The record gives the reactivity of an RNA of 177 nucleotides to 2A3 and DMS.
High 2A3 reactivity points to a flexible backbone, as in loops and unpaired stretches.
Reactivities are given for positions 27 through 126.
The reactions ran in a buffer of 150 mM KOAc, 10 mM MgCl2 and 150 mM bicine (pH 8.5), at 24 C.

RNA sequence: GGGAACGACUCGAGUAGAGUCGAAAAAUCUUAGCACCAAGAUGGUAAAUUUCCAGGGAAUGAAAAGAUGUGUCAGCUAUGAUCUCCUCUGAGUUGUGGUUGGUCAGAAAAUAUCACAGCAAACAGACAUUCUUUGAGAUUUCGAUCUCAAAGAAUGAAAAGAAACAACAACAACAAC
Reactivity to 2A3 in 0.01 (KOAc 150mM, MgCl2 10mM, bicine 150mM(pH8.5), 24C), signal-to-noise 5, nucleotides 027 to 126: a000u020c030u020u030a040g030c010a010c050c030a040a020g050a110u070g010g050u120a140a200a190u060u060u010c020c030a050g060g040g000a090a110u100g070a090a100a050a040g060a050u090g040u040g030u120c040a020g000c020u050a050u110g020a060u040c020u010c040c010u010c020u040g100a120g030u030u030g010u040g010g010u040u040g030g060u070c030a020g170a050a090a020a020u120a010u040c030a020c010a040g030c030a080a060a050c010a010g060a020
Reactivity to DMS in 0.01 (KOAc 150mM, MgCl2 10mM, bicine 150mM(pH8.5), 24C), signal-to-noise 6, nucleotides 027 to 126: a030u000c020u000u000a080g020c060a090c080c070a070a040g010a050u000g000g000u000a060a100a150u000u000u000c020c020a080g000g000g010a100a070u010g000a080a070a070a070g000a070u010g000u000g010u000c060a070g010c060u000a060u000g000a060u000c050u000c040c060u000c050u000g000a080g020u000u000g020u000g010g010u010u010g000g010u000c120a080g000a060a050a060a070u000a030u000c030a030c030a030g000c060a070a050a090c110a070g010a200